[RMDB]
RNA sequence: GGGAACGACUCGAGUAGAGUCGAAAAAGGAAUGUGACUGAGGCUGGGUGUGGCAGAGGAGAGCACAGCCAGUUGUGGGUUUUUCUUGGGGCCCAGAUAGAUGGGAACAGAGGUGGAGGCCCCUCUCUCAUGAGUUCCUGUUCGCAGGAACUCAUGAAAAAGAAACAACAACAACAAC
Reactivity to 2A3 in 0.01 (KOAc 150mM, MgCl2 10mM, bicine 150mM(pH8.5), 24C), signal-to-noise 3, nucleotides 027 to 126: a020g160g030a100a080u140g030u060g060a010c070u090g010a050g070g020c000u030g010g030g050u030g000u000g050g020c030a030g020a070g110g110a080g030a000g100c020a000c000a030g080c020c000a020g000u020u030g030u070g010g030g000u010u110u030u050u010c020u020u070g000g000g000g000c010c030c030a030g050a020u170a000g090a050u050g060g010g000a070a040c050a070g070a030g030g030u110g060g060a060g030g000c000c000c000c000u000c000u000c000
Reactivity to DMS in 0.01 (KOAc 150mM, MgCl2 10mM, bicine 150mM(pH8.5), 24C), signal-to-noise 2, nucleotides 027 to 126: a040g020g020a110a050u000g020u040g030a060c010u010g000a210g010g020c000u000g000g000g000u010g030u000g010g030c100a100g000a090g030g000a100g000a160g000c030a020c030a060g000c000c030a030g000u010u000g000u000g000g000g030u000u000u000u000u010c060u010u000g030g070g000g000c010c000c040a060g020a110u040a050g020a090u000g000g020g050a080a120c060a110g000a130g000g000u000g010g010a130g000g000c010c000c030c000u000c070u040c050